[RMDB]
RNA sequence: GGGAACGACUCGAGUAGAGUCGAAAAGUUACCAAUCUUAAUAAGAGCGCUGGGUGGCCUCUUAACAAGUUUGGUAAAGCAGGUUUGUACUACGACUCUUUGUCAUAUGAAGAACAAGACCAACUCUAUGCUGUCACCAAGCGCAAUAUCCUGCCCACCAAGAUAGUGACUUCGGUCACUAUCUUGGAAAAGAAACAACAACAACAAC
Reactivity to 2A3 in 0.01 (KOAc 150mM, MgCl2 10mM, bicine 150mM(pH8.5), 24C), signal-to-noise 4, nucleotides 027 to 156: g050u040u050a040c000c000a010a030u030c010u060u130a180a120u020a150a080g010a010g020c160g000c050u060g090g080g230u130g030g030c010c010u010c010u010u030a020a020c060a040a000g030u070u060u050g000g000u030a030a000a020g070c030a020g030g040u030u040u050g040u070a070c030u030a050c050g030a030c030u070c070u150u110u140g020u100c030a050u080a070u300g060a070a120g010a110a040c060a120a020g030a060c010c040a020a010c000u000c010u050a060u090g020c040u030g030u020c020a030c030c010a040a010g070c050g040c050a020a010u080a060u130c000c020u040g010c010c040c000a020